RNA sequence: GGGAACGACUCGAGUAGAGUCGAAAAGCGAAAUCUGAUUCUCAAGCUGCGCAAAAUCAGGCUGAAUUAGCGCGUGACGCAGCCAACGCUGCACGCGAUGAAACUAACUCAAUCAAGAAUCAGACGCAACAGAUUGUUGACGGUGCUGUCGGUAGCAAGUAUGCCUUCAAUUCGUUGAAGGCAUACUAAAAGAAACAACAACAACAAC
Reactivity to DMS in 0.01 (KOAc 150mM, MgCl2 10mM, bicine 150mM(pH8.5), 24C), signal-to-noise 2, nucleotides 027 to 156: g020c040g040a060a120a070u000c020u010g000a000u010u000c010u000c000a150a150g000c010u010g000c060g000c070a110a090a100a170u010c020a080g000g000c080u000g050a000a020u000u000a050g010c010g030c010g050u010g000a080c090g030c010a030g030c050c040a030a100c300g000c010u000g030c000a230c020g010c000g030a200u010g030a080a130a100c000u000a030a020c050u000c040a010a110u000c080a090a020g020a040a040u000c000a010g000a040c010g030c190a090a030c010a090g010a150u000u010g010u000u000g010a130c080g040g030u000g020c040u000g010u000c020g000g000u000a140g010c130a120
Reactivity to 2A3 in 0.01 (KOAc 150mM, MgCl2 10mM, bicine 150mM(pH8.5), 24C), signal-to-noise 5, nucleotides 027 to 156: g030c010g030a070a040a020u030c000u010g000a010u010u010c010u020c050a080a080g020c030u090g000c110g010c150a100a070a020a120u230c080a070g120g010c030u060g030a080a070u040u020a050g020c000g000c000g020u040g040a040c080g000c040a000g000c010c030a140a050c150g020c000u040g000c010a010c000g050c000g010a070u160g080a150a030a030c050u060a030a020c000u020c080a000a110u030c060a100a000g000a000a010u000c000a000g010a010c000g000c000a020a050c000a060g160a190u040u050g020u010u010g010a040c020g030g120u070g010c010u060g090u170c070g070g010u070a010g030c000a000

Annotation:
The record gives the reactivity of an RNA of 207 nucleotides to DMS and 2A3. For DMS the reverse transcriptase was MarathonRT. Reactivities are given for positions 27 through 156. Source: RMDB library OK3TST, as collected in RNAgym. For 2A3, 2,966 sequencing reads were counted.